[RMDB]
RNA sequence: GGGAACGACUCGAGUAGAGUCGAAAAAGUGAUCCAGCAUCAUGGGAUCUCAUGGAUCCAUGGAUCUGCAGUCAUGUACUAUAUGAUGACUAGAGCGAUCAGUACACUAGCGCGAUCCAUCGUGUCGGAAUUCACGUCGGUUCGCCGACGUGAAUUCAAAAGAAACAACAACAACAAC
Reactivity to DMS in 0.01 (KOAc 150mM, MgCl2 10mM, bicine 150mM(pH8.5), 24C), signal-to-noise 2, nucleotides 027 to 126: a070g000u000g000a000u000c000c010a040g020c150a130u010c140a130u000g010g000g000a020u000c010u000c170a090u010g030g000a050u010c050c060a040u000g010g000a010u000c010u000g070c000a020g010u000c180a050u000g010u000a010c130u000a170u000a060u000g010a070u010g020a110c060u000a070g010a120g020c070g030a050u000c050a100g040u000a050c040a070c120u000a150g010c160g010c020g000a010u000c010c000a000u000c080g000u000g020u000c060g030
Reactivity to 2A3 in 0.01 (KOAc 150mM, MgCl2 10mM, bicine 150mM(pH8.5), 24C), signal-to-noise 2, nucleotides 027 to 126: a000g080u040g000a010u000c020c000a000g020c010a100u120c000a040u170g080g030g000a010u000c020u000c070a130u160g110g000a020u020c000c000a020u040g000g000a000u000c120u170g060c010a000g050u070c060a060u030g060u010a020c040u060a010u070a070u300g100a030u040g130a080c050u020a050g020a010g190c070g050a030u080c010a020g020u030a030c070a060c090u090a090g030c030g020c020g030a020u000c000c000a040u030c070g020u000g100u000c040g020